An RNA of 177 nucleotides, treated with DMS and 2A3 and read out base by base.
It was measured as part of the RMDB library M2PK90.
DMS adducts were read by reverse transcription with MarathonRT.
[RMDB]
RNA sequence: GGGAACGACUCGAGUAGAGUCGAAAAAUACACUGCACGUGCGUGCGAGCAGUUUUCGAAAUAAUCGUACGUACGUAAAGACCCAACUCUACUCGAUGCGAGGGUCUGCAAAGUCGUUCCCAUAUAACAAUUAGUACUAUUUCGAUAGUACUAAUUGAAAAGAAACAACAACAACAAC
Reactivity to DMS in 0.01 (KOAc 150mM, MgCl2 10mM, bicine 150mM(pH8.5), 24C), signal-to-noise 6, nucleotides 027 to 126: a070u010a130c170a150c080u000g000c220a030c010g010u000g000c020g010u000g000c030g010a010g000c250a160g010u000u000u000u000c150g010a050a040a040u000a080a150u000c000g020u000a010c020g010u000a010c020g040u000a020a130a040g000a060c040c040c020a100a040c000u000c000u010a010c010u000c000g000a090u000g010c010g000a120g000g000g010u000c000u000g000c010a080a130a070g010u000c000g010u000u000c000c000c010a020u000a010u000a080a190
Reactivity to 2A3 in 0.01 (KOAc 150mM, MgCl2 10mM, bicine 150mM(pH8.5), 24C), signal-to-noise 8, nucleotides 027 to 126: a000u150a020c090a020c110u120g040c100a000c010g010u000g000c000g000u010g010c000g000a020g020c160a050g010u040u030u080u250c160g140a070a030a040u130a040a050u030c000g000u010a010c000g000u000a000c000g000u000a010a000a000g000a000c000c010c010a010a010c000u000c000u000a010c000u000c000g020a030u040g000c010g010a100g020g050g030u030c030u020g010c020a190a300a020g000u000c020g000u000u010c000c000c000a000u020a000u000a000a000